[RMDB]
RNA sequence: GGGAACGACUCGAGUAGAGUCGAAAACUCUUACUGUUCGCAGUAAGAGAAUGGGAUUCGAAUCCCUCCCUAACCGCGGGUAAGCGGCCCAAAAAUAAUAUAGAGAGGCGUGCUUCGGCACGCCUAACGGAGCAGAAUAAUUCGUUAUUCUGCUCCGAAAAGAAACAACAACAACAAC
Reactivity to 2A3 in 0.01 (KOAc 150mM, MgCl2 10mM, bicine 150mM(pH8.5), 24C), signal-to-noise 2, nucleotides 027 to 126: c010u000c000u000u000a000c000u020g050u040u090c230g000c060a000g000u010a000a000g000a000g000a000a030u030g030g000g020a010u060u230c060g040a120a110u010c000c000c010u020c000c000c000u010a030a040c020c010g010c040g010g030g120u120a170a060g020c010g030g040c000c000c000a050a050a010a000a020u260a150a100u270a020u210a160g060a010g010a010g060g000c000g000u010g020c040u030u080c160g060g000c020a000c000g020c000c000u000a000a000
Reactivity to DMS in 0.01 (KOAc 150mM, MgCl2 10mM, bicine 150mM(pH8.5), 24C), signal-to-noise 2, nucleotides 027 to 126: c000u000c000u000u000a010c000u000g000u020u000c140g020c010a000g020u000a020a000g010a000g000a040a010u010g020g000g000a030u000u000c300g000a090a240u000c010c010c010u000c000c000c000u010a120a200c020c010g040c000g000g020g010u000a120a150g000c000g000g000c020c050c060a020a130a100a100a070u020a050a100u010a110u020a200g000a200g010a030g000g010c000g010u000g020c000u000u010c170g030g000c010a010c000g030c000c010u000a000a030